An RNA of 177 nucleotides, treated with 2A3 and DMS and read out base by base. The DMS profile rests on 1,424 reads. For 2A3, 918 sequencing reads were counted. 2A3 adducts were read by reverse transcription with SuperScript II with manganese.
RNA sequence: GGGAACGACUCGAGUAGAGUCGAAAAUAGGUGAUGCCUACGGGUUUGCCACUCCGCCGCAUGAGCGCGCGCGCCUAUUGGAACAAUGGUGGAACCGCGCAACGGAGCCACAAGCUAUCGCGGUUGAUAAGAUGAUCGUGUUCGCACGAUCAUCUUAAAAAGAAACAACAACAACAAC
Reactivity to 2A3 in 0.01 (KOAc 150mM, MgCl2 10mM, bicine 150mM(pH8.5), 24C), signal-to-noise 1, nucleotides 027 to 126: u050a010g020g040u050g120a050u140g060c030c010u010a060c120g070g050g010u050u030u090g040c010c010a020c040u040c030c040g040c010c010g030c060a100u200g110a070g060c040g000c010g010c000g030c010g030c000c030u170a070u140u010g040g010a140a000c030a080a030u070g040g030u020g050g060a040a060c020c000g000c000g010c020a000a050c070g060g080a030g000c000c000a040c010a050a010g080c040u040a010u110c010g000c030g030g000u000u040g050a070
Reactivity to DMS in 0.01 (KOAc 150mM, MgCl2 10mM, bicine 150mM(pH8.5), 24C), signal-to-noise 2, nucleotides 027 to 126: u000a050g000g010u000g020a110u000g020c010c020u000a130c220g000g000g020u000u000u000g010c060c070a190c060u000c070c060g020c040c070g010c040a130u020g020a150g040c020g010c120g040c100g050c040g010c000c000u000a000u040u000g010g010a160a090c090a060a050u000g000g050u000g060g010a060a110c100c000g000c050g010c150a080a150c060g010g010a080g000c010c060a050c180a170a220g000c040u000a070u010c050g000c100g000g000u000u010g000a150